[RMDB]
RNA sequence: GGGAACGACUCGAGUAGAGUCGAAAACUGACCAUGGCCGGGACACUUAUUGCAAUACUACUUUGUGUUACAGGGGUUUACUCAACUAUUGAAUUUGUGCCUUCAGGACAUCUAAACUGGACUCCAGGAGGUCCCAUAAGUUCGCUUAUGGGACCUCAAAAGAAACAACAACAACAAC
Reactivity to 2A3 in 0.01 (KOAc 150mM, MgCl2 10mM, bicine 150mM(pH8.5), 24C), signal-to-noise 2, nucleotides 027 to 126: c020u030g050a040c020c010a060u060g100g000c000c000g080g010g020a030c020a000c040u090u040a070u060u190g000c020a050a000u040a090c090u010a030c020u060u090u210g020u040g010u000u020a040c030a020g140g010g000g000u050u220u040a100c070u050c020a000a070c070u100a090u130u040g030a120a100u060u050u050g000u020g010c000c000u060u040c080a120g000g000a010c000a010u000c040u080a040a040a000c030u020g000g000a030c010u000c020c000a000g000
This 177-nucleotide RNA was probed chemically with 2A3. Reactivities are given for positions 27 through 126. The 2A3 profile rests on 971 reads. 2A3 adducts were read by reverse transcription with SuperScript II with manganese. The reactions ran in a buffer of 150 mM KOAc, 10 mM MgCl2 and 150 mM bicine (pH 8.5), at 24 C.